Chemical mapping of a 177-nucleotide RNA with 2A3 and DMS.
Reactivities are rounded to 0.1 and cut off at 0 and 3.
It was measured as part of the RMDB library OK2TRN.
For DMS the reverse transcriptase was MarathonRT.
High 2A3 reactivity points to a flexible backbone, as in loops and unpaired stretches.
For 2A3 the reverse transcriptase was SuperScript II with manganese.
RNA sequence: GGGAACGACUCGAGUAGAGUCGAAAAUUCAGAGUGCAGCCAGGCCACAUUUUUACCGCCAAGACUCACCUGCGGCGGAAAUUCCCCCUUACGGAUGAGUUCGUAGAUGGUCGAGCGUGACAGGCCGCCUUAGUAGGGUUUUCGAACCCUACUAAGGAAAAGAAACAACAACAACAAC
Reactivity to 2A3 in 0.01 (KOAc 150mM, MgCl2 10mM, bicine 150mM(pH8.5), 24C), signal-to-noise 2, nucleotides 027 to 126: u070u040c020a010g060a030g110u070g000c010a010g000c030c010a020g000g000c030c010a050c020a090u070u050u070u070u080a100c010c010g030c010c020a040a000g050a080c020u000c090a050c010c000u050g050c040g020g020c020g000g000a030a030a050u060u010c030c000c000c000c020u030u090a000c010g020g050a050u030g030a030g100u000u000c020g020u000a020g020a130u060g010g010u000c030g000a030g030c040g030u030g020a020c010a020g010g010c000c000g020
Reactivity to DMS in 0.01 (KOAc 150mM, MgCl2 10mM, bicine 150mM(pH8.5), 24C), signal-to-noise 6, nucleotides 027 to 126: u010u020c060a110g010a120g010u000g020c030a060g010c030c040a090g020g010c030c040a080c090a050u010u000u010u000u010a100c050c020g000c020c030a130a190g010a080c060u010c070a040c070c020u010g020c300g010g010c110g000g000a020a050a120u010u000c010c010c020c090c090u010u010a090c060g000g000a070u000g000a090g010u000u000c030g010u010a060g010a100u000g010g030u000c070g000a100g010c050g010u000g010a060c070a100g000g000c020c050g010